[RMDB]
RNA sequence: GGGAACGACUCGAGUAGAGUCGAAAAGAUAUGGAGUAGCUAGUGGACAGCUAAGACAGAAUUUCGGAAACGAAAUUUCGAGCUGUCAGGCUACUCCUAAGUCAAAAGAGAGGCUUCGGCCUCUCAACAUGUUGCAUUGGUUCGCCAAUGCAACAUGAAAAGAAACAACAACAACAAC
Reactivity to 2A3 in 0.01 (KOAc 150mM, MgCl2 10mM, bicine 150mM(pH8.5), 24C), signal-to-noise 3, nucleotides 027 to 126: g010a000u070a060u140g000g010a000g010u000a010g020c010u150a170g300u180g300g000a000c000a000g030c030u080a080a100g070a040c100a060g070a020a010u000u000u000c010g000g020a040a050a030c010g020a010a030a000u090u100u040c000g000a000g020c000u010g000u010c020a000g000g000c010u000a010c000u010c000c010u000a010a010g000u020c010a000a000a090a030g000a000g000a010g020g000c050u120u120c300g130g000c020c000u000c000u000c000a000a000
Reactivity to DMS in 0.01 (KOAc 150mM, MgCl2 10mM, bicine 150mM(pH8.5), 24C), signal-to-noise 3, nucleotides 027 to 126: g000a050u010a300u030g020g020a020g020u000a020g000c010u000a080g000u000g000g010a000c000a000g010c010u000a130a090g010a170c300a090g000a010a000u000u000u010c010g000g010a100a120a150c000g020a000a010a010u000u000u000c030g000a020g010c000u000g010u000c010a050g010g000c000u000a000c000u000c000c000u010a010a060g020u000c040a090a080a100a140g000a010g000a000g000g000c000u000u030c200g050g000c000c010u000c000u000c000a010a120

Background: Chemical mapping of a 177-nucleotide RNA with 2A3 and DMS. Values cover nucleotides 27 to 126. DMS adducts were read by reverse transcription with MarathonRT. Source: RMDB library TTRDEL, as collected in RNAgym. The 2A3 profile rests on 2,799 reads. Values are in units of 0.01, from 0 to 300, in steps of 10. The reactions ran in a buffer of 150 mM KOAc, 10 mM MgCl2 and 150 mM bicine (pH 8.5), at 24 C.